[RMDB]
About this RNA:
The record gives the reactivity of an RNA of 177 nucleotides to DMS. The DMS profile rests on 849 reads. Conditions: 150 mM KOAc, 10 mM MgCl2 and 150 mM bicine (pH 8.5), 24 C. Values cover nucleotides 27 to 126.
RNA sequence: GGGAACGACUCGAGUAGAGUCGAAAAGAUAUGGACCUACGAACUACUCUCCGUAACAGCGACGAAGGGAAAGUUUCGGAAACGAAACUUUCCCAGAGCUGGAGAAGGAGAGCGUAGGUCCUAAGUCCAUUAGACGUUCCUUCGGGAACGUCUAAUGAAAAGAAACAACAACAACAAC
Reactivity to DMS in 0.01 (KOAc 150mM, MgCl2 10mM, bicine 150mM(pH8.5), 24C), signal-to-noise 1, nucleotides 027 to 126: g000a090u020a300u010g040g020a010c000c000u020a010c010g010a150a070c130u010a300c000u010c000u010c010c000g030u000a230a300c000a020g000c000g020a070c300g000a190a150g000g000g000a000a030a030g010u000u000u010c000g040g010a100a060a210c010g020a000a030a020c000u000u000u000c000c010c000a010g000a070g040c010u000g010g050a000g020a120a150g000g040a010g020a010g000c000g020u000a010g000g020u000c000c000u000a000a060g010u000c050